[RMDB]
RNA sequence: GGGAACGACUCGAGUAGAGUCGAAAAGAUAUGGACCCAAGUGCCUUUUGACGAGCGGUCGGAAACGACCCGCUCGAUAAGGCAUAUGGGUCCUAAGUCAAAAUCUUUAACCUUCGGGUUAAAGAAACAAUAUCCAACUGUUCGCAGUUGGAUAUUGAAAAGAAACAACAACAACAAC
Reactivity to 2A3 in 0.01 (KOAc 150mM, MgCl2 10mM, bicine 150mM(pH8.5), 24C), signal-to-noise 2, nucleotides 027 to 126: g020a020u060a030u120g000g000a000c000c010c010a070a110g050u000g030c000c000u140u290u200u300g210a100c030g000a000g020c000g000g030u000c010g030g010a070a070a020c010g010a010c070c050c020g000c020u000c000g000a000u030a020a030g010g000c000a000u020a020u000g000g000g010u010c000c000u000a000a000g030u020c010a020a000a070a300u010c000u010u010u000a000a000c000c000u020u100c300g180g000g000u010u010a000a010a010g000a010a010a000
Reactivity to DMS in 0.01 (KOAc 150mM, MgCl2 10mM, bicine 150mM(pH8.5), 24C), signal-to-noise 4, nucleotides 027 to 126: g010a020u000a300u030g000g000a010c000c000c000a010a300g020u000g000c000c000u010u000u010u000g010a160c120g010a040g010c020g010g000u000c000g020g000a030a050a120c010g000a010c060c060c130g010c000u000c010g010a040u000a000a030g000g000c000a010u000a060u000g000g010g000u000c000c000u000a000a110g010u010c030a110a110a060a080u000c000u000u000u000a000a000c000c000u000u010c220g040g000g000u000u000a000a000a000g000a050a090a120